[RMDB]
RNA sequence: GGGAACGACUCGAGUAGAGUCGAAAAAUAGCCCUGGGUAUAGUAACAAUGUUGAAUAUGACUCUUAAUUGAGGAAAUGGGUGAUCCGCAGCCAAAUCCUAAGGACAUUUUAUUGUCUAUGGAUGCAGUUUCAAAGCAAUUUCGAUUGCUUUGAAACAAAAGAAACAACAACAACAAC
Reactivity to 2A3 in 0.01 (KOAc 150mM, MgCl2 10mM, bicine 150mM(pH8.5), 24C), signal-to-noise 4, nucleotides 027 to 126: a020u080a000g030c010c000c000u050g060g020g050u120a080u010a090g200u110a040a060c050a060a140u160g090u150u090g120a100a040u200a090u160g040a020c000u000c010u040u120a140a110u300u080g060a030g040g080a020a020a100u110g050g020g000u000g020a050u030c040c000g000c030a000g030c000c030a090a120a010u000c000c020u030a020a050g040g010a000c000a000u100u210u050u070a230u260u050g010u000c000u020a010u070g000g000a000u010g040c000a020
Reactivity to DMS in 0.01 (KOAc 150mM, MgCl2 10mM, bicine 150mM(pH8.5), 24C), signal-to-noise 4, nucleotides 027 to 126: a060u010a200g020c000c000c000u000g010g000g020u010a080u040a080g030u000a050a050c080a130a120u010g010u010u010g000a070a060u020a070u000g000a190c020u000c030u000u010a090a140u000u000g010a040g010g000a020a060a060u000g000g020g010u000g010a060u020c050c020g030c060a110g020c040c080a060a110a030u000c010c010u010a060a130g000g000a020c010a000u010u020u030u010a060u020u010g000u000c020u000a300u040g010g010a000u010g000c170a110
Source information
The data come from the RNA Mapping Database (RMDB), libraries RFM100 and RFMREP. Chemical mapping of a 177-nucleotide RNA with 2A3 and DMS.